[RMDB]
RNA sequence: GGGAACGACUCGAGUAGAGUCGAAAACAAGGAGGGUAGUGUGAUCAAUUUCUGUUACAUGCAUCAAAUGGAACUUGCUAAUGGUACACAUACCGGUUCAGCAUUUGAUGGUACUAUGUAUGGUGCCUGAGGCCUGACUUCGGUCAGGCCAAAAGAAACAACAACAACAAC
Reactivity to DMS in 0.01 (KOAc 150mM, MgCl2 10mM, bicine 150mM(pH8.5), 24C), signal-to-noise 3, nucleotides 027 to 129: c110a090a060g010g020a080g030g000g040u010a070g050u030g030u050g010a100u010c090a070a090u000u000u000c040u030g020u070u020a040c060a090u050g020c000a090u020c080a050a000a040u000g000g080a030a070c040u020u000g020c220u010a060a030u040g000g010u060a090c220a040c060a120u010a000c130c140g020g000u000u080c020a050g030c070a070u000u000u000g030a010u040g010g030u030a030c070u030a040u050g030u020a030u080g010g010u040g010c070c020u050g100a230
Reactivity to 2A3 in 0.01 (KOAc 150mM, MgCl2 10mM, bicine 150mM(pH8.5), 24C), signal-to-noise 3, nucleotides 027 to 129: c040a010a060g050g000a050g000g030g000u030a000g030u070g030u060g040a060u040c070a060a090u010u060u030c000u000g070u020u060a040c010a010u050g030c000a020u000c010a000a040a050u050g010g010a000a030c010u040u060g000c010u060a060a040u010g010g010u110a000c110a000c010a120u090a040c040c000g000g000u020u000c030a090g030c010a040u070u030u040g030a020u040g030g020u020a050c040u030a030u110g060u050a060u050g020g060u130g030c000c000u020g040a030
Structure probing data (DMS and 2A3) for a 170-nucleotide construct. DMS (dimethyl sulfate) methylates the pairing face of unpaired adenines and cytosines. For DMS, 6,942 sequencing reads were counted. The RNA was probed in 150 mM KOAc, 10 mM MgCl2 and 150 mM bicine (pH 8.5) at 24 C. It was measured as part of the RMDB library 15KLIB. For 2A3, 4,476 sequencing reads were counted. 2A3 adducts were read by reverse transcription with SuperScript II with manganese.